Conditions: 150 mM KOAc, 10 mM MgCl2 and 150 mM bicine (pH 8.5), 24 C. Structure probing data (2A3) for a 207-nucleotide construct.

[RMDB]
RNA sequence: GGGAACGACUCGAGUAGAGUCGAAAAACUGCCAUACGUGGCAGAAACACGCCCUACCAGGACUAAACAGCGUGUCUAAAAAACAGUCCUUCAUACCUGAUCUGGAGGGUAGAUCAGGAAUACUAAAAAAAUCGGGUGAAGUUCGCUUCACCCGAAAGAAGUGAGUAAUCUUCGGAUUACUCACUUCAAAAGAAACAACAACAACAAC
Reactivity to 2A3 in 0.01 (KOAc 150mM, MgCl2 10mM, bicine 150mM(pH8.5), 24C), signal-to-noise 2, nucleotides 027 to 156: a000c000u010g000c000c000a020u040a060c230g090u050g000g000c000a000g000a020a000a000c000a000c000g000c030c000c010u040a090c030c080a020g000g010a010c000u030a060a160a060c030a030g010c000g010u010g040u060c140u080a040a020a010a000a000a000c010a000g020u010c000c000u040u120c060a060u040a150c010c000u000g010a000u010c000u010g080g060a050g070g060g060u080a010g000a000u010c000a000g020g020a000a010u140a080c080u150a040a050a020a010a000a000a100u030c000g000g010g000u000g000a010a000g000u050u090c100g020c090u000u000c000a000c000c000c000g000a000a010a000
2A3 adducts were read by reverse transcription with SuperScript II with manganese. The data come from the RNA Mapping Database (RMDB), library M2RFOK.